[RMDB]
RNA sequence: GGGAACGACUCGAGUAGAGUCGAAAAAGGGGGGAUACGACGCAUGAUGAUGGUGCUGGGAUUGUACGUGUUUAUGCUGCGCACUGUGCCGUAUCAGGAACUGCAGUAUCAACGCAGCUGGCGACAUGCGGCAAACAGCCGGGUCAACCGACGUCCGAGGGUGAAUCUAAUUCGUUAGAUUCACCCUAAAAGAAACAACAACAACAAC
Reactivity to 2A3 in 0.01 (KOAc 150mM, MgCl2 10mM, bicine 150mM(pH8.5), 24C), signal-to-noise 2, nucleotides 027 to 156: a000g040g000g000g000g000g000a030u050a050c060g010a020c020g020c060a010u100g040a070u020g020a040u110g060g020u150g040c010u050g000g000g110a170u090u090g030u050a050c020g010u030g000u040u020u000a040u070g010c000u000g000c000g000c040a030c020u040g000u030g000c000c020g040u070a110u170c050a070g070g000a030a110c050u140g000c000a000g050u070a050u300c050a000a070c020g000c000a000g000c000u020g030g000c050g000a040c000a060u160g030c040g010g030c020a020a060a020c040a020g000c040c030g000g000g060u060c030a090a040c050c000g040a070c020g020u010c020c010g010
Reactivity to DMS in 0.01 (KOAc 150mM, MgCl2 10mM, bicine 150mM(pH8.5), 24C), signal-to-noise 1, nucleotides 027 to 156: a070g000g010g020g010g050g030a170u010a060c070g020a030c050g040c030a070u000g010a100u020g000a150u000g070g020u010g040c030u000g000g000g030a140u000u010g010u000a060c040g000u000g000u000u010u000a070u010g040c020u000g020c020g000c060a090c030u000g000u000g000c000c070g010u030a080u040c130a180g000g000a020a070c030u000g000c010a070g010u010a120u000c050a000a070c030g000c000a040g020c020u000g060g000c070g000a130c040a050u000g020c000g000g010c000a040a080a030c100a120g000c000c020g000g030g010u000c080a030a070c080c000g010a060c020g010u000c020c040g010
About this RNA:
Chemical mapping of a 207-nucleotide RNA with 2A3 and DMS. DMS adducts were read by reverse transcription with MarathonRT. High DMS reactivity at an A or C suggests that its Watson-Crick edge is free. Conditions: 150 mM KOAc, 10 mM MgCl2 and 150 mM bicine (pH 8.5), 24 C.